Source: RMDB library PDB130, as collected in RNAgym. This 207-nucleotide RNA was probed chemically with 2A3.
RNA sequence: GGGAACGACUCGAGUAGAGUCGAAAAGAUGUCAGAGGUGAAAUUCUUAGAUUUUCUGGAGACGAACAACUGCGAAAGCAUUUGUCUAAAAUACUUCCAUUAAUCAAGAACGAAAGUUAAGGGAGUGAAGACGAUCAGAUACCGUCGUAAUCUUAACCUUGAUUGACGAGUUCGCUCGUCAAUCAAGAAAAGAAACAACAACAACAAC
Reactivity to 2A3 in 0.01 (KOAc 150mM, MgCl2 10mM, bicine 150mM(pH8.5), 24C), signal-to-noise 2, nucleotides 027 to 156: g050a010u070g040u090c010a010g030a020g040g040u030g060a000a030a150u010u000c010u010u070a070g010a050u060u110u070u050c030u000g060g000a080g000a060c020g050a160a000c010a000a030c010u010g000c000g050a130a000a010g030c040a000u010u030u030g010u000c040u090a030a030a050a110u150a140c020u150u000c010c000a000u000u000a000a050u090c020a020a020g010a020a010c050g030a210a100a020g010u010u070a050a030g050g000g010a090g010u060g070a020a000g040a030c040g020a040u090c050a020g030a100u080a100c040c000g000u000c010g050u080a020a050u030c030u000u070a030a020c010
The RNA was probed in 150 mM KOAc, 10 mM MgCl2 and 150 mM bicine (pH 8.5) at 24 C. Reactivities are given for positions 27 through 156.